RNA sequence: GGGAACGACUCGAGUAGAGUCGAAAAACUCGUAUUUACUACGCCCGUAGCCGUUACUGUAGCCUUAGGCAGUUAAAUUUUAUUAAGAUGUAUUUUUGCUAUCAUGACAUGGAUACGAUCCUUAGAACAACGCAUUCGAUUUCGAUCGAAUGCGUUGAAAAGAAACAACAACAACAAC
Reactivity to DMS in 0.01 (KOAc 150mM, MgCl2 10mM, bicine 150mM(pH8.5), 24C), signal-to-noise 1, nucleotides 027 to 126: a090c220u000c030g030u000a030u000u020u000a150c160u000a050c060g010c150c050c060g000u000a090g010c070c020g010u000u000a070c130u010g020u000a110g000c030c080u010u000a040g000g010c010a040g000u000u000a070a030a120u010u000u000u020a070u010u000a040a070g000a110u000g010u000a010u000u000u010u000u000g000c020u000a080u000c090a090u000g000a060c090a070u000g010g010a000u010a050c060g000a080u000c030c010u000u010a090g010a090a200
Reactivity to 2A3 in 0.01 (KOAc 150mM, MgCl2 10mM, bicine 150mM(pH8.5), 24C), signal-to-noise 1, nucleotides 027 to 126: a000c060u010c020g010u030a080u010u170u030a030c050u030a020c020g030c030c060c060g030u000a010g050c000c020g000u000u020a010c010u080g040u040a010g010c020c030u030u080a030g000g100c010a010g000u010u060a120a050a020u180u170u060u120a090u100u050a050a060g060a210u020g020u060a200u100u100u030u080u030g000c020u030a050u140c000a040u110g030a080c000a060u060g040g000a000u000a020c000g030a010u040c000c000u040u060a050g070a040a020

The data come from the RNA Mapping Database (RMDB), library OK2TRN. The record gives the reactivity of an RNA of 177 nucleotides to DMS and 2A3. For DMS the reverse transcriptase was MarathonRT. The reactions ran in a buffer of 150 mM KOAc, 10 mM MgCl2 and 150 mM bicine (pH 8.5), at 24 C. For DMS, 945 sequencing reads were counted. For 2A3 the reverse transcriptase was SuperScript II with manganese. The 2A3 profile rests on 830 reads.